[RMDB]
RNA sequence: GGGAACGACUCGAGUAGAGUCGAAAAGGGGUUCGUGAAUCUGGGUGACUGUGUGUGAAAUUCACGUAUACAAUGGCAGAGGCGAUGACCCUCACUGCAAUUAUUCUCGGAUGGAUGCCUACGAUACUGGAGUGGGACGCGCUAAGCACACGGUCCAGAAGAGUAGUGUUUUCGAACACUACUCUUCAAAAGAAACAACAACAACAAC
Reactivity to 2A3 in 0.01 (KOAc 150mM, MgCl2 10mM, bicine 150mM(pH8.5), 24C), signal-to-noise 4, nucleotides 027 to 156: g070g020g000g010u050u060c030g010u040g040a060a030u050c070u090g150g050g030u100g040a010c020u010g010u000g000u010g020u020g050a040a030a060u080u040c010a010c060g020u050a060u030a090c110a100a110u060g070g000c030a020g010a030g080g000c010g050a090u110g050a080c010c010c000u050c010a090c060u040g000c000a050a080u110u040a060u170u090c060u060c040g130g010a070u080g090g000a020u090g030c000c000u050a030c040g010a020u050a160c050u100g040g030a050g040u120g000g000g010a030c020g040c000g000c110u080a080a000g010c000a000c000a000c010g020g000u010c010c040a010
Reactivity to DMS in 0.01 (KOAc 150mM, MgCl2 10mM, bicine 150mM(pH8.5), 24C), signal-to-noise 2, nucleotides 027 to 156: g020g020g010g030u000u010c040g020u000g020a080a110u000c050u000g000g040g040u020g030a080c040u010g040u010g010u040g000u000g000a070a060a100u000u000c000a040c050g000u020a120u000a080c120a030a070u010g010g030c060a150g010a080g000g040c020g000a140u000g000a210c110c030c010u020c050a090c090u000g000c000a060a040u000u000a140u000u000c050u000c060g020g010a180u010g000g020a080u000g020c050c020u000a070c080g010a110u000a030c080u010g010g010a160g020u000g000g000g000a100c030g020c050g040c080u000a070a200g010c050a030c000a010c020g060g000u000c010c070a100